About this RNA:
Conditions: 150 mM KOAc, 10 mM MgCl2 and 150 mM bicine (pH 8.5), 24 C. An RNA of 207 nucleotides, treated with 2A3 and read out base by base. Values cover nucleotides 27 to 156. The 2A3 profile rests on 716 reads. Values are in units of 0.01, from 0 to 300, in steps of 10. For 2A3 the reverse transcriptase was SuperScript II with manganese. 2A3 is a SHAPE reagent: it acylates the 2'-hydroxyl of flexible nucleotides of all four kinds.
RNA sequence: GGGAACGACUCGAGUAGAGUCGAAAAGUACCGAAGAUCGAAGCUACCUAAUCCCCGAGCCCGGUAGCGAGAUCGAGGUACGACUGGGCGAGGGGUACAGGAAUUGCAGUUACCAAAUCCCGUCCGGGUAACUGCAAUUCCGACACGGACGGGAACAACUAGCAGGAUAUUUCGAUAUCCUGCUAGUAAAAGAAACAACAACAACAAC
Reactivity to 2A3 in 0.01 (KOAc 150mM, MgCl2 10mM, bicine 150mM(pH8.5), 24C), signal-to-noise 1, nucleotides 027 to 156: g010u030a030c020c020g080a110a040g040a000u080c030g120a170a010g040c030u090a070c000c020u080a090a220u220c050c040c000c060g000a000g000c000c040c020g000g000u000a010g110c040g000a000g000a000u040c060g010a040g000g030u020a010c000g020a020c000u050g000g000g030c030g060a070g030g010g000g000u020a020c060a060g010g000a030a000u030u000g040c010a030g010u000u000a000c000c010a020a080a170u110c010c000c000g020u000c040c010g030g000g000u020a020a000c000u000g000c000a000a000u010u010c010c010g000a000c020a010c080g100g000a020c010g010g020g030a010a020c010a020